An RNA of 177 nucleotides, treated with 2A3 and DMS and read out base by base. For DMS, 5,932 sequencing reads were counted. For 2A3 the reverse transcriptase was SuperScript II with manganese.
[RMDB]
RNA sequence: GGGAACGACUCGAGUAGAGUCGAAAACGCAGGGAGGGCUGGCAACGCUUCGACUUCCGGCCGUGCGCGACGCCCGACGAGGCGCGCGCGAUUUUCGAGGCGCACGGCUACCCGCCAGUGGUGCGCAAUACUCCCGGUAGUUCGCUACCGGGAGUAUAAAAGAAACAACAACAACAAC
Reactivity to 2A3 in 0.01 (KOAc 150mM, MgCl2 10mM, bicine 150mM(pH8.5), 24C), signal-to-noise 4, nucleotides 027 to 126: c050g030c030a040g040g030g050a060g020g050g040c100u060g060g030c030a060a030c070g030c040u090u100c050g070a100c030u080u050c040c010g030g040c020c010g090u090g000c000g010c010g150a090c020g010c010c010c000g050a080c060g050a160g010g000c010g000c010g000c000g000c010g050a040u000u000u050u140c020g020a010g090g020c010g000c010a010c080g050g000c010u030a050c010c000c000g040c010c020a040g020u090g040g020u040g030c050g000c000a030
Reactivity to DMS in 0.01 (KOAc 150mM, MgCl2 10mM, bicine 150mM(pH8.5), 24C), signal-to-noise 3, nucleotides 027 to 126: c090g010c050a060g000g000g030a070g000g000g000c110u020g000g010c080a080a120c060g000c020u010u010c080g000a070c090u000u020c020c060g000g060c030c080g000u030g000c000g020c000g030a110c010g010c000c000c020g010a150c090g000a090g020g020c010g010c020g010c030g020c010g000a030u010u010u030u000c030g010a130g000g010c000g000c080a050c110g000g010c000u000a090c070c020c040g020c050c010a080g020u030g000g010u000g010c020g010c060a140
For 2A3, 2,691 sequencing reads were counted.